Record summary:
This 207-nucleotide RNA was probed chemically with 2A3. 2A3 adducts were read by reverse transcription with SuperScript II with manganese. The reactions ran in a buffer of 150 mM KOAc, 10 mM MgCl2 and 150 mM bicine (pH 8.5), at 24 C. The 2A3 profile rests on 1,085 reads.

[RMDB]
RNA sequence: GGGAACGACUCGAGUAGAGUCGAAAAGUCUGUCGCUGGGUGAGGAACUACCAUAUACAAAGCUCAACAGCUUCUGAAGCGCGCACGGAAGACAUGAGCAAAAAGUAUGGCCUCACCUGUGCUGAAGCGCGCACGGCAACCGAAAGGUGCGGGAAAACACAAACCAAGAGUUCGCUCUUGGUUUGUGAAAAGAAACAACAACAACAAC
Reactivity to 2A3 in 0.01 (KOAc 150mM, MgCl2 10mM, bicine 150mM(pH8.5), 24C), signal-to-noise 1, nucleotides 027 to 156: g050u000c020u060g170u090c000g010c010u000g000g010g020u000g010a020g050g020a070a000c060u150a110c300c010a010u030a010u020a050c120a070a120a070g000c000u020c040a250a210c070a170g010c000u010u030c000u030g100a300a130g010c000g020c000g000c010a000c030g000g020a000a010g000a030c150a300u300g000a000g000c000a050a050a000a000a030g000u000a000u010g030g000c000c000u020c000a000c000c000u000g000u000g000c000u000g020a070a060g000c010g000c000g000c000a020c020g000g000c010a010a020c000c010g000a110a100a050g030g000u010g010c040g000g020g070a050a040a020a000